[RMDB]
Conditions: 150 mM KOAc, 10 mM MgCl2 and 150 mM bicine (pH 8.5), 24 C. Chemical mapping of a 177-nucleotide RNA with 2A3 and DMS. In probing experiments dimethyl sulfate is read out at A N1 and C N3, which are open when not base-paired. For DMS, 1,787 sequencing reads were counted. Reactivities are given for positions 27 through 126.
RNA sequence: GGGAACGACUCGAGUAGAGUCGAAAACGUCGGCCAAUCAGCUGCUGCCCGCGCUGGUUUAAAUGACUAUCGCUGUGCUUUUGUUCGCGCACCCGCCGCGACAACCAUUUCCACCACAGCCAGGCGGUGGACAAGCAUUUUUCGAAAUGCUUGUCCAAAAAGAAACAACAACAACAAC
Reactivity to 2A3 in 0.01 (KOAc 150mM, MgCl2 10mM, bicine 150mM(pH8.5), 24C), signal-to-noise 1, nucleotides 027 to 126: c050g010u000c040g060g000c030c020a040a050u040c020a050g000c030u200g020c030u140g020c060c000c010g050c000g000c000u000g010g070u020u070u080a090a120a050u240g030a030c020u070a100u150c000g000c020u020g060u100g090c030u140u190u030u090g090u170u060c020g000c000g000c030a090c060c010c010g010c060c000g000c000g000a010c020a010a000c010c040a140u070u060u030c000c000a050c000c020a000c000a010g030c050c000a020g080g000c000g040g030
Reactivity to DMS in 0.01 (KOAc 150mM, MgCl2 10mM, bicine 150mM(pH8.5), 24C), signal-to-noise 3, nucleotides 027 to 126: c130g030u010c030g030g020c180c080a100a060u000c060a060g000c030u010g010c050u000g010c120c070c110g040c050g010c020u000g000g000u000u000u000a050a170a220u000g000a040c040u020a090u000c160g010c030u000g010u000g000c040u000u010u010u010g000u000u000c050g050c030g000c050a100c050c050c050g000c160c020g000c040g000a040c030a030a070c230c090a070u000u000u000c000c030a130c090c040a100c070a050g000c050c090a040g000g000c040g010g010